Source: RMDB library OK3TST, as collected in RNAgym. This 207-nucleotide RNA was probed chemically with DMS and 2A3. The DMS profile rests on 1,470 reads. In probing experiments dimethyl sulfate is read out at A N1 and C N3, which are open when not base-paired. The RNA was probed in 150 mM KOAc, 10 mM MgCl2 and 150 mM bicine (pH 8.5) at 24 C. The 2A3 profile rests on 1,274 reads.
[RMDB]
RNA sequence: GGGAACGACUCGAGUAGAGUCGAAAAGUAAUAGAUAUAAGGAUGACGAGAAAGGGUGCGCUGAUAUCCUUAACGAAUGCUAGCAGUAAAUAGAAUAGCGCUCCUAAUACAACUAGCAACAAAAGGAUAAGGUAUCGUGAUGUCAAUCACAUUGCGAAUCCACUGAUCGAUUCGUCGAUCAGUGGAUAAAAGAAACAACAACAACAAC
Reactivity to DMS in 0.01 (KOAc 150mM, MgCl2 10mM, bicine 150mM(pH8.5), 24C), signal-to-noise 1, nucleotides 027 to 156: g010u000a090a160u000a120g010a230u000a110u030a030a110g010g000a190u010g000a120c060g000a140g020a090a130a140g000g000g000u000g000c050g020c020u000g020a180u000a050u000c000c000u000u010a050a110c050g040a130a110u000g030c010u010a010g000c080a160g000u000a060a120a140u000a140g000a000a080u000a210g000c060g000c060u020c000c000u000a020a230u010a050c030a000a030c010u000a020g030c010a030a190c100a030a180a010a030g000g000a040u000a020a200g000g000u000a100u000c030g020u000g000a030u000g030u000c030a020a080u000c150a100c010a040u000u010g000c000g000a060
Reactivity to 2A3 in 0.01 (KOAc 150mM, MgCl2 10mM, bicine 150mM(pH8.5), 24C), signal-to-noise 2, nucleotides 027 to 156: g020u020a010a170u050a110g070a070u120a030u070a140a000g010g030a030u060g040a030c050g000a010g060a130a060a020g010g020g010u060g010c030g010c010u030g050a030u000a010u100c000c000u000u010a040a010c090g040a130a070u040g000c000u010a000g000c060a010g020u120a020a030a130u140a070g060a110a070u050a030g010c000g010c000u060c010c000u050a110a010u060a010c010a060a010c000u030a000g010c000a000a020c010a070a120a020a000g000g000a010u040a030a090g090g020u100a050u090c000g000u000g020a000u000g020u050c080a040a070u100c000a040c020a050u000u040g020c010g020a010